Structure probing data (DMS and 2A3) for a 177-nucleotide construct.
[RMDB]
RNA sequence: GGGAACGACUCGAGUAGAGUCGAAAAGGGGAGGUCGAGGAGCCCCGCAUGCUCAACGGUGUCCUGCUCCACAAAAUGUUGCACACCCGGUACACCAUUAACGGUUAACGUACUCGCCGUACGAGCCCUUGGCUCCUAGUUUCGACUAGGAGCCAAGAAAAGAAACAACAACAACAAC
Reactivity to DMS in 0.01 (KOAc 150mM, MgCl2 10mM, bicine 150mM(pH8.5), 24C), signal-to-noise 3, nucleotides 027 to 126: g020g010g010g020a020g000g000u000c050g030a100g000g030a110g000c030c020c010c050g000c120a050u010g000c000u000c020a100a070c070g000g000u010g000u000c080c030u010g000c010u000c030c010a080c140a060a030a080a050u010g000u010u000g000c090a050c100a100c040c030c020g040g000u010a030c060a110c040c010a020u060u040a100a080c120g000g000u010u020a050a110c070g000u000a030c030u000c120g000c080c070g000u010a030c030g010a080g000c010c060
Reactivity to 2A3 in 0.01 (KOAc 150mM, MgCl2 10mM, bicine 150mM(pH8.5), 24C), signal-to-noise 5, nucleotides 027 to 126: g030g000g000g010a040g040g040u120c080g050a070g000g040a040g060c000c000c000c010g010c020a080u130g000c000u030c070a100a030c060g020g010u050g060u040c000c020u020g060c020u000c030c000a040c030a020a120a010a050u220g020u090u100g010c050a040c010a020c020c010c000g020g020u050a010c000a030c040c010a040u110u150a130a040c100g010g030u080u090a110a030c010g000u010a030c040u020c080g040c040c040g000u030a030c040g010a000g000c000c000

Record summary: It was measured as part of the RMDB library OK1LIB.